[RMDB]
RNA sequence: GGGAACGACUCGAGUAGAGUCGAAAAGCGGUAUUGCUCAUUCACUGGGCUGACGUUAGUUCAGUGACGUGCCCGGGAUCGCUACGGUUGGUCGUCGUCCUGGUCCCCGCCGCGCUCCGCUGGCAUGACAUGACCUGCCGUUCGCGGCAGGUCAUGUAAAAGAAACAACAACAACAAC
Reactivity to 2A3 in 0.01 (KOAc 150mM, MgCl2 10mM, bicine 150mM(pH8.5), 24C), signal-to-noise 1, nucleotides 027 to 126: g000c010g070g000u150a090u050u200g000c020u060c060a110u180u040c010a000c040u000g000g000g000c000u020g050a190c190g100u260u300a000g000u000u000c010a000g000u000g000a010c010g000u070g040c000c010c030g030g000g000a040u090c140g030c020u100a010c030g010g030u020u100g070g050u230c030g030u000c010g020u070c030c000u050g000g000u000c000c000c000c000g040c010c000g000c000g030c010u080c010c020g030c050u040g000g000c030a070u070g000
Reactivity to DMS in 0.01 (KOAc 150mM, MgCl2 10mM, bicine 150mM(pH8.5), 24C), signal-to-noise 1, nucleotides 027 to 126: g030c030g000g020u000a090u000u000g020c050u000c050a100u000u010c030a020c010u000g000g000g000c000u000g040a130c300g020u000u000a020g010u000u000c040a020g040u000g020a030c300g040u010g000c000c010c030g010g010g000a090u000c000g000c070u020a020c020g010g010u000u000g020g020u010c060g020u000c050g010u000c020c020u020g010g010u000c010c010c010c130g020c010c010g010c110g000c150u000c020c070g010c050u000g000g000c050a100u000g030
Conditions: 150 mM KOAc, 10 mM MgCl2 and 150 mM bicine (pH 8.5), 24 C. The record gives the reactivity of an RNA of 177 nucleotides to 2A3 and DMS. Reactivities are given for positions 27 through 126. The data come from the RNA Mapping Database (RMDB), library OK2TRN. The DMS profile rests on 1,146 reads.